[RMDB]
RNA sequence: GGGAACGACUCGAGUAGAGUCGAAAAGAUCAGGCCACAGGAUCUGACUGGGACAUGCUCUGUGGCUGGGCCUGUCGGCGACUUGUCUGCGUGAGCGCCGGGGCCGAGGAGAACGCUGAGCAGACUGCGCCCGGAGAAGCCCUGCUGCAGCAUCGAACCAUUAUGCUUCGUUCGCGAAGCAUAAUGGAAAAGAAACAACAACAACAAC
Reactivity to 2A3 in 0.01 (KOAc 150mM, MgCl2 10mM, bicine 150mM(pH8.5), 24C), signal-to-noise 4, nucleotides 027 to 156: g030a110u060c070a020g100g010c020c020a050c040a080g040g010a050u000c020u040g070a030c040u050g030g040g070a050c040a060u120g030c040u030c010u050g010u000g010g000c010u010g010g000g000c000c000u090g130u170c020g000g010c000g050a190c060u070u140g020u020c020u030g040c030g050u090g090a020g000c010g000c010c020g000g010g040g000c020c000g000a050g000g020a040g010a070a020c030g010c050u070g030a010g000c010a000g000a010c010u010g020c020g000c010c030c010g070g010a080g040a070a020g030c010c000c020u020g000c010u030g010c010a050g030c000a030u040c020g060a020a040
Reactivity to DMS in 0.01 (KOAc 150mM, MgCl2 10mM, bicine 150mM(pH8.5), 24C), signal-to-noise 2, nucleotides 027 to 156: g010a060u010c030a120g010g060c010c000a100c070a120g010g000a050u000c000u000g000a170c040u000g000g030g000a060c070a130u000g030c040u000c040u000g020u000g000g000c000u010g020g030g020c010c010u010g000u000c000g040g030c020g000a050c060u000u000g030u000c010u000g010c100g000u000g000a090g030c020g010c040c020g000g040g030g010c030c030g010a050g010g010a150g000a150a050c020g020c050u020g010a150g010c010a060g000a070c020u010g020c000g020c000c010c060g060g010a150g000a060a120g000c000c010c040u010g010c020u000g010c040a120g040c040a170u000c070g000a110a270